[RMDB]
RNA sequence: GGGAACGACUCGAGUAGAGUCGAAAAUGUGUUCCUAGGUCGGAAGCAUCAAUCCCAGGGGAAGCCAACUGCAGAACAUUUUAUGCAUCGCUCAUCCUGUUAUGAGCCUGGUGCUGUUCCAUCUCUCGUUCAAAUCAUGGUUCGCCAUGAUUUGAACAAAAGAAACAACAACAACAAC
Reactivity to 2A3 in 0.01 (KOAc 150mM, MgCl2 10mM, bicine 150mM(pH8.5), 24C), signal-to-noise 2, nucleotides 027 to 126: u080g030u010g050u050u000c010c000u010a090g080g080u120c100g030g040a040a000g020c000a020u050c040a020a120u050c020c010c000a000g040g000g030g000a050a030g020c030c020a050a040c080u070g030c030a020g020a130a030c010a070u070u090u060u120a100u130g000c000a020u030c000g000c010u010c010a010u020c020c090u090g040u150u070a040u030g010a000g000c000c060u060g010g050u010g010c010u020g030u040u020c020c010a140u000c050u030c020u040c050
Reactivity to DMS in 0.01 (KOAc 150mM, MgCl2 10mM, bicine 150mM(pH8.5), 24C), signal-to-noise 3, nucleotides 027 to 126: u000g040u010g000u000u000c020c000u000a110g000g030u000c110g010g010a100a160g010c020a030u000c110a090a120u000c010c040c010a140g000g000g010g010a090a050g020c020c040a050a040c100u000g020c100a110g000a060a050c080a090u020u010u000u010a100u000g010c020a020u000c080g010c010u000c020a010u000c050c180u010g000u010u000a020u010g000a020g020c030c060u010g000g010u000g010c010u010g010u000u000c030c050a070u000c070u000c050u000c180